RNA sequence: GGGAACGACUCGAGUAGAGUCGAAAAAUUUCAAUUAAACGCAUUUCAAAUAAAGGAACAAGCCUAUACAUUGUUAAUACAAACGCAAAAUCAUUAUUUGCUUCUUCUAGCGUGUCGCUUGUUUUAUAAUAAUCUCCGUCCAUUGCGCUAUACCAAACACGACCAUAAGAUUCGUCUUAUGGUCGUGAAAAGAAACAACAACAACAAC
Reactivity to DMS in 0.01 (KOAc 150mM, MgCl2 10mM, bicine 150mM(pH8.5), 24C), signal-to-noise 2, nucleotides 027 to 156: a130u000u000u000c030a050a100u010u000a050a070a090c030g040c000a070u010u010u010c030a120a170a130u000a120a140a240g000g000a030a060c020a020a060g020c010c140u000a180u010a000c070a100u020u010g020u000u000a050a070u010a040c120a010a090a070c050g020c030a030a040a080a110u010c130a040u010u000a090u000u000u000g010c020u000u000c070u020u000c040u000a060g010c020g000u000g020u000c090g020c020u010u010g000u000u000u000u000a070u010a090a080u000a080a120u020c010u000c010c020g000u000c030c050a150u000u000g000c000g010c090u000a070u000a160c030c050a060a110a220
Reactivity to 2A3 in 0.01 (KOAc 150mM, MgCl2 10mM, bicine 150mM(pH8.5), 24C), signal-to-noise 4, nucleotides 027 to 156: a000u120u160u080c040a020a090u100u150a070a090a010c030g010c030a050u120u130u190c130a100a090a160u180a140a130a040g040g010a040a010c020a030a000g020c020c050u140a110u090a120c020a040u180u220g040u070u050a100a050u120a150c090a090a070a000c070g000c000a020a040a010a060u100c060a130u080u220a060u090u070u020g010c000u040u030c010u110u040c030u040a010g020c020g000u030g030u030c020g000c030u000u000g000u030u040u010u060a110u040a070a080u070a020a070u010c020u020c050c010g060u000c040c050a060u050u040g030c030g000c020u070a060u090a190c100c060a000a080a000
Source information: Structure probing data (DMS and 2A3) for a 207-nucleotide construct. For DMS the reverse transcriptase was MarathonRT. Reactivities are given for positions 27 through 156. Source: RMDB library OK3TST, as collected in RNAgym.